Structure probing data (DMS and 2A3) for a 177-nucleotide construct. Conditions: 150 mM KOAc, 10 mM MgCl2 and 150 mM bicine (pH 8.5), 24 C. The DMS profile rests on 26,674 reads.

RNA sequence: GGGAACGACUCGAGUAGAGUCGAAAACAGUGAUGGAAACAUCACUGAAAAACGUGGCAGCGCCUCACGAAAAAGUCGAUCGAAUACCGAUCGACAAGCGCUAAAGUCAUGCCGAAAGGCAUGACAACGAUAAUUUAGUAUUCGUACUAAAUUAUCGAAAAGAAACAACAACAACAAC
Reactivity to DMS in 0.01 (KOAc 150mM, MgCl2 10mM, bicine 150mM(pH8.5), 24C), signal-to-noise 8, nucleotides 027 to 126: c030a010g020u000g010a010u000g000g000a200a110a160c000a000u010c000a010c000u010g000a020a070a070a110a150c020g010u000g010g000c110a040g010c000g010c010c210u040c020a000c020g000a060a060a050a040a030g010u000c000g010a010u000c000g030a280a160u040a150c230c010g000a000u000c000g010a000c000a010a050g000c000g000c010u000a090a090a110g000u000c000a000u010g000c000c000g000a080a070a130g010g010c010a000u000g010a010c010a040a080
Reactivity to 2A3 in 0.01 (KOAc 150mM, MgCl2 10mM, bicine 150mM(pH8.5), 24C), signal-to-noise 9, nucleotides 027 to 126: c000a000g000u000g000a000u000g000g030a040a030a020c000a000u000c000a000c000u000g010a060a000a000a000a000c010g000u000g010g000c050a020g000c030g000c020c030u190c020a010c050g250a190a040a010a010a000g000u000c000g000a000u000c000g010a040a060u140a300c120c010g000a000u000c000g000a000c000a000a000g000c000g000c000u020a070a020a000g000u000c000a000u000g000c000c000g060a090a030a010g000g000c000a000u000g000a000c000a000a010